[RMDB]
RNA sequence: GGGAACGACUCGAGUAGAGUCGAAAAACACCUGUGAUCCCAGCUACUCAGGAGGCUGAGGCUAAAGAAUCACUUGAACCUGGGAGGCAGAGGUUGCAGUAAGCCAAGAUCACACCAUUGCACGCCAGGGCAAUAGAGGAUUCGUCCUCUAUUGCCCAAAAGAAACAACAACAACAAC
Reactivity to 2A3 in 0.01 (KOAc 150mM, MgCl2 10mM, bicine 150mM(pH8.5), 24C), signal-to-noise 2, nucleotides 027 to 126: a000c010a020c010c010u030g010u030g070a050u030c000c010c000a020g030c040u060a070c010u010c040a000g000g060a050g150g000c000u010g020a000g080g000c030u130a160a060a060g070a050a080u070c010a020c050u030u090g040a020a020c000c020u000g000g000g040a050g050g000c020a010g020a070g120g000u010u080g010c020a030g040u060a100a030g050c000c010a040a000g040a050u060c020a020c000a010c050c020a070u020u100g010c030a020c050g030c020c010a050
Reactivity to DMS in 0.01 (KOAc 150mM, MgCl2 10mM, bicine 150mM(pH8.5), 24C), signal-to-noise 3, nucleotides 027 to 126: a090c140a050c080c020u000g010u010g010a100u000c010c040c030a060g010c030u010a070c030u000c040a040g000g020a150g010g000c050u000g000a040g000g010c130u000a060a080a110g000a130a050u000c060a040c050u000u000g030a050a080c080c020u000g000g000g000a300g000g020c010a030g030a050g000g000u000u000g010c030a060g010u000a050a120g000c020c040a040a060g000a050u000c080a070c060a060c020c020a090u000u010g010c100a080c060g000c030c040a090